[RMDB]
RNA sequence: GGGAACGACUCGAGUAGAGUCGAAAAAAGAAAUCAAAAAAGAUUUCUGAGACAAACACGCUUCACAAUGUGCGGCAAAGAUACAUUGUUUAUGCAAAGGCACUUCGCAAUGUGUGCUCAAACAUUGACUACCGUCCACCGUUCGCGGUGGACGGAACAACAACAUUAUCUUCGGAUAAUGUUGUUGAAAAGAAACAACAACAACAAC
Reactivity to DMS in 0.01 (KOAc 150mM, MgCl2 10mM, bicine 150mM(pH8.5), 24C), signal-to-noise 2, nucleotides 027 to 156: a180a020g000a030a000a010u040c000a000a050a100a180a240a250g000a030u000u010u000c000u000g020a230g030a120c110a140a100a110c040a070c080g020c030u010u000c060a200c030a050a030u000g040u000g000c090g030g000c060a060a030a110g010a160u000a030c030a050u000u020g010u000u000u000a050u010g010c010a040a190a160g000g000c020a030c000u000u000c160g020c100a120a040u000g010u000g000u000g000c020u000c030a090a150a030c030a050u010u000g000a120c050u010a130c020c000g040u010c000c000a000c010c020g000u010u000c270g020c110g090g010u000g000g000a000c000g000g000a000a020
Reactivity to 2A3 in 0.01 (KOAc 150mM, MgCl2 10mM, bicine 150mM(pH8.5), 24C), signal-to-noise 4, nucleotides 027 to 156: a000a010g040a040a020a000u050c080a120a080a230a160a060a060g010a010u010u010u010c030u030g040a050g030a050c090a020a130a020c050a010c050g010c010u010u030c020a010c000a050a000u010g000u010g010c010g050g080c080a100a070a010g090a030u040a020c000a000u000u010g030u010u100u090a060u060g020c060a140a150a100g200g000c010a030c040u080u080c100g030c050a020a030u040g020u000g020u030g040c030u050c110a040a060a020c010a010u020u030g050a090c020u100a110c030c000g000u000c000c000a000c010c010g040u070u080c230g010c010g090g000u010g000g010a000c000g000g000a000a000